[RMDB]
RNA sequence: GGGAACGACUCGAGUAGAGUCGAAAAGAGAUUGCCACGCUGGUGAAGAACCUGAUCCUCACAGUGGACACGCUUGAGUGUCUGCGGCCUGACAAGUCCUCGGGUGAUCGUACGUCAACGGAAGCGUUCGACGUGCACCACUCACUCAAGGGCAUCGCAUACCCUACACCUUCGGGUGUAGGGUAUGAAAAGAAACAACAACAACAAC
Reactivity to DMS in 0.01 (KOAc 150mM, MgCl2 10mM, bicine 150mM(pH8.5), 24C), signal-to-noise 1, nucleotides 027 to 156: g020a100g000a130u000u010g050c020c000a050c100g010c030u010g040g020u010g000a140a090g010a060a100c040c070u020g010a150u010c020c020u010c020a050c060a130g000u010g020g000a020c010a050c040g020c230u010u010g010a120g000u000g010u000c000u000g020c050g030g000c020c030u000g040a140c060a060a090g000u000c020c030u000c030g000g030g040u000g010a050u010c080g010u010a020c020g000u000c020a170a050c000g000g000a190a190g010c040g040u010u000c040g030a000c000g000u030g010c000a050c090c040a040c110u000c000a070c030u010c060a040a110g040g030g060c020a020u010c020g040
Reactivity to 2A3 in 0.01 (KOAc 150mM, MgCl2 10mM, bicine 150mM(pH8.5), 24C), signal-to-noise 4, nucleotides 027 to 156: g110a010g020a060u060u120g010c010c010a080c060g070c090u090g010g020u120g020a110a090g060a080a030c030c010u070g050a070u060c020c010u050c020a060c010a040g010u020g020g010a010c010a010c020g120c110u190u270g120a040g070u020g010u000c010u000g020c000g040g000c000c030u080g020a040c060a140a060g010u000c000c000u010c030g000g000g000u000g010a030u080c070g010u000a000c000g000u000c000a000a000c000g010g100a170a060g210c010g020u020u070c140g000a000c000g000u000g010c000a020c010c020a030c010u020c000a000c000u010c000a010a010g010g000g000c000a010u060c030g000